[RMDB]
RNA sequence: GGGAACGACUCGAGUAGAGUCGAAAAUGCUGGUGGAUGUGCAUGAUACGGAUACGAUGUCCUGCUACCCAUCGAUCGAUAAACAACGUGCAUUGUCUAUCUUGCACGGUAUCGAUCAGCAAGGACAGUAUCAUAUCGCUUUCGAGCGAUAUGAUACAAAAGAAACAACAACAACAAC
Reactivity to DMS in 0.01 (KOAc 150mM, MgCl2 10mM, bicine 150mM(pH8.5), 24C), signal-to-noise 7, nucleotides 027 to 126: u000g010c010u010g020g020u000g010g010a090u000g020u000g020c020a030u000g000a170u010a110c160g010g010a120u010a070c130g020a190u010g010u000c000c000u000g000c020u000a070c040c010c010a070u000c060g010a010u000c000g020a010u010a030a100a190c240a160a130c010g020u000g000c000a010u010u000g010u020c250u010a110u010c030u010u000g000c000a010c010g010g010u000a010u000c010g000a010u000c000a040g000c030a050a060g000g010a020c020a060
Reactivity to 2A3 in 0.01 (KOAc 150mM, MgCl2 10mM, bicine 150mM(pH8.5), 24C), signal-to-noise 5, nucleotides 027 to 126: u050g000c020u050g010g020u030g010g050a140u100g050u040g050c030a030u050g040a050u130a120c070g080g040a040u030a160c080g090a090u070g000u000c000c000u000g010c010u020a050c010c000c000a020u050c020g000a000u000c010g010a010u020a040a200a070c120a090a040c050g000u000g000c010a050u140u010g070u060c110u150a170u080c030u000u010g000c010a000c010g000g020u000a010u000c000g000a010u020c020a000g010c030a040a070g010g000a000c010a020
The record gives the reactivity of an RNA of 177 nucleotides to DMS and 2A3. The DMS profile rests on 9,964 reads. Values cover nucleotides 27 to 126. It was measured as part of the RMDB library OK2TST. 2A3 is a SHAPE reagent: it acylates the 2'-hydroxyl of flexible nucleotides of all four kinds.